[RMDB]
Conditions: 150 mM KOAc, 10 mM MgCl2 and 150 mM bicine (pH 8.5), 24 C. Structure probing data (DMS and 2A3) for a 207-nucleotide construct. The 2A3 profile rests on 1,347 reads. DMS adducts were read by reverse transcription with MarathonRT.
RNA sequence: GGGAACGACUCGAGUAGAGUCGAAAAAGCCACCUCCCGGCCCAAAUGCAAAUUCAUAUUCAUGAGAGCGGGAUAAAUAAAGACAAAUCUCCGCUGUAAUAGCACUUGGAUUCGCAUCCGUCUUUGCUGGCCUUUAGGUUUAGGGGACUGAAGACAGCCUAUAAGCAAAAUUCGUUUUGCUUAUAGGAAAAGAAACAACAACAACAAC
Reactivity to DMS in 0.01 (KOAc 150mM, MgCl2 10mM, bicine 150mM(pH8.5), 24C), signal-to-noise 1, nucleotides 027 to 156: a190g060c040c020a070c030c030u000c010c080c050g000g000c000c030c080a020a070a050u000g010c020a070a040a110u020u010c020a050u010a210u000u020c070a140u000g030a250g020a050g020c020g040g020g000a070u000a030a050a180u000a100a150a140g010a160c100a060a170a080u000c010u000c040c000g040c000u000g000u010a080a070u000a120g020c070a050c080u000u000g010g010a030u000u000c040g010c020a080u000c040c020g030u000c020u000u000u010g010c040u000g010g030c000c030u010u000u010a080g020g010u020u000u000a090g010g000g030g010a120c000u000g000a040a080g010a030c020a120g030
Reactivity to 2A3 in 0.01 (KOAc 150mM, MgCl2 10mM, bicine 150mM(pH8.5), 24C), signal-to-noise 2, nucleotides 027 to 156: a000g050c010c010a040c010c020u050c010c090c000g030g000c000c020c020a060a100a000u030g000c000a020a060a010u010u020c020a020u080a100u230u140c070a020u080g050a020g010a000g160c000g000g000g030a000u100a020a090a000u180a050a110a010g060a040c060a050a190a060u020c170u040c030c000g000c020u040g020u080a070a130u050a060g020c020a000c100u010u020g000g000a010u020u040c060g000c010a010u040c040c020g070u000c050u070u040u100g060c070u060g020g010c000c000u050u090u070a060g010g020u040u050u130a020g000g000g030g010a020c040u050g010a040a020g190a010c080a010g220